Description
An RNA of 177 nucleotides, treated with 2A3 and DMS and read out base by base.
RNA sequence: GGGAACGACUCGAGUAGAGUCGAAAAAUCGAUAGUACAGACGUCUGAUCUCAUGCGUACGCGUGGAUCGGAUCGCUAGGUCUAGGCAGCUAGAUCGAGUACACAUGGCUGAUCCGAGUACUCGUACAUUAAGCUCAAAAUUCGUUUUGAGCUUAAUAAAAGAAACAACAACAACAAC
Reactivity to 2A3 in 0.01 (KOAc 150mM, MgCl2 10mM, bicine 150mM(pH8.5), 24C), signal-to-noise 9, nucleotides 027 to 126: a010u100c030g010a030u040a070g090u070a060c050a070g130a090c060g040u020c040u100g060a090u040c070u020c060a060u170g100c060g090u080a040c080g000c010g010u020g030g050a220u000c000g010g000a010u000c010g000c010u020a050g000g000u000c000u010a010g050g020c060a070g120c040u010a000g000a020u010c010g010a050g080u130a020c080a000c020a140u210g070g000c090u150g020a030u010c010c010g000a000g000u000a010c010u010c020g000u000a010c010
Reactivity to DMS in 0.01 (KOAc 150mM, MgCl2 10mM, bicine 150mM(pH8.5), 24C), signal-to-noise 9, nucleotides 027 to 126: a090u000c050g010a060u000a080g010u000a050c070a100g010a120c130g010u000c020u010g010a070u000c010u000c020a100u000g020c130g020u000a030c080g020c070g030u000g010g010a130u000c010g000g000a020u000c030g010c020u000a080g010g010u000c000u000a020g010g010c300a130g010c010u000a010g000a020u000c000g010a120g010u000a060c150a080c210a150u000g000g010c050u010g010a030u000c010c010g000a050g010u000a020c020u000c010g010u000a030c060
2A3 is a SHAPE reagent: it acylates the 2'-hydroxyl of flexible nucleotides of all four kinds.
The reactions ran in a buffer of 150 mM KOAc, 10 mM MgCl2 and 150 mM bicine (pH 8.5), at 24 C.
For 2A3 the reverse transcriptase was SuperScript II with manganese.